[RMDB]
RNA sequence: GGGAACGACUCGAGUAGAGUCGAAAAGGAGAGGAUCAUGAAGGCUCAGGCCCUCAGGGACAACUCCAUGACCUCCUACAUGAUGAGCAAGAAGACCAUGGAGGUGAACGCAGACCACCCGAUCAUGGGAUGGGUCAAGAUUCGUCUUGACCCAUCCAAAAGAAACAACAACAACAAC
Reactivity to 2A3 in 0.01 (KOAc 150mM, MgCl2 10mM, bicine 150mM(pH8.5), 24C), signal-to-noise 2, nucleotides 027 to 126: g020g010a050g010a030g130g070a150u030c000a030u000g050a010a000g050g040c050u030c270a070g040g140c030c000c000u040c060a070g040g000g040a020c020a060a070c050u000c000c000a000u050g030a010c000c010u020c000c010u060a050c040a070u150g030a050u020g010a000g060c060a100a040g090a050a010g020a090c020c010a010u090g010g000a060g000g050u030g020a060a010c090g010c120a000g050a070c000c020a030c020c000c010g050a070u090c080a100u100g060
Reactivity to DMS in 0.01 (KOAc 150mM, MgCl2 10mM, bicine 150mM(pH8.5), 24C), signal-to-noise 2, nucleotides 027 to 126: g010g010a050g010a140g030g000a130u010c010a100u000g000a050a050g030g010c080u010c230a160g060g010c020c000c040u020c080a030g010g010g010a070c060a100a070c030u000c010c000a060u000g010a050c170c060u000c030c000u000a080c140a060u010g010a100u000g000a120g000c100a070a070g000a100a100g000a090c060c010a040u000g000g010a070g000g000u000g010a070a090c120g000c080a080g000a110c080c040a050c010c000c000g010a060u000c150a100u020g010